RNA sequence: GGGAACGACUCGAGUAGAGUCGAAAAGGUUUCACCUUCGGGUGAAACCAAAUAAUAGUCGCUAGAAAACGAUCAAAACUAGCGACUUACAUAACCAUCGAAAAAGAAUGGUGUUCGCACCAUUCAAGUGGUAUGCUAAGUUCGCUUAGCAUACCACAAAAGAAACAACAACAACAAC
Reactivity to 2A3 in 0.01 (KOAc 150mM, MgCl2 10mM, bicine 150mM(pH8.5), 24C), signal-to-noise 2, nucleotides 027 to 126: g080g010u000u000u000c000a010c010c000u030u060c200g030g000g010u000g000a000a000a000c000c000a000a000a000u010a000a010u030a000g000u010c000g000c000u000a010g020a130a140a000a070c160g100a210u230c120a080a090a010a080c000u010a000g000c010g000a000c000u000u000a000c000a010u140a020a070c030c010a050u120c050g130a080a030a000a070a040g020a010a000u000g010g000u000g000u020u020c250g000c070a000c000c000a000u010u000c010a010a010
Reactivity to DMS in 0.01 (KOAc 150mM, MgCl2 10mM, bicine 150mM(pH8.5), 24C), signal-to-noise 1, nucleotides 027 to 126: g000g000u050u000u000c000a040c000c000u000u000c220g140g000g010u000g000a020a010a000c000c010a000a030a010u000a100a220u000a020g010u000c020g000c000u000a000g000a110a040a110a070c100g000a100u000c210a020a060a120a070c010u000a000g040c000g000a010c000u000u000a040c120a120u000a070a190c010c000a090u000c170g000a010a140a100a100a090g000a000a010u000g000g040u000g020u000u020c290g020c000a040c000c000a020u000u000c000a120a060